[RMDB]
Chemical mapping of a 177-nucleotide RNA with DMS and 2A3. Conditions: 150 mM KOAc, 10 mM MgCl2 and 150 mM bicine (pH 8.5), 24 C. DMS adducts were read by reverse transcription with MarathonRT. Source: RMDB library OK1LIB, as collected in RNAgym.
RNA sequence: GGGAACGACUCGAGUAGAGUCGAAAAUUCCUGUGGGAGUCGUGACCUAUUCAACGGGCGCUGGCCUGAUAUUGUAGGGGACAAUGGACGUCAGUGCUUCAGCAGCUGGCUUGCCCUACGGGGACGAUCUUCGGACGUGGUUCGCCGCGUUUGAAGGAAAAGAAACAACAACAACAAC
Reactivity to DMS in 0.01 (KOAc 150mM, MgCl2 10mM, bicine 150mM(pH8.5), 24C), signal-to-noise 9, nucleotides 027 to 126: u010u000c010c000u000g030u050g010g000g000a020g010u000c000g010u000g000a230c010c000u020a120u040u040c170a120a140c070g000g010g010c010g020c200u030g010g010c010c010u000g000a100u030a040u020u020g030u000a030g010g000g000g010a210c050a060a100u030g010g010a150c190g000u000c000a010g010u000g000c030u020u040c200a140g010c030a100g010c010u000g000g000c000u000u040g010c010c000c010u000a020c030g010g000g000g000a130c160g000a080
Reactivity to 2A3 in 0.01 (KOAc 150mM, MgCl2 10mM, bicine 150mM(pH8.5), 24C), signal-to-noise 9, nucleotides 027 to 126: u010u020c000c000u030g030u210g040g000g000a010g000u010c000g000u000g040a070c000c000u010a080u040u170c050a060a050c030g010g010g010c070g020c170u120g130g020c010c010u020g030a030u040a040u120u120g010u020a020g000g030g000g010a040c300a150a090u140g140g050a030c050g010u010c010a010g000u010g030c010u150u100c030a060g010c000a020g030c020u020g010g000c000u040u250g030c000c000c000u010a010c010g000g000g000g000a020c050g040a070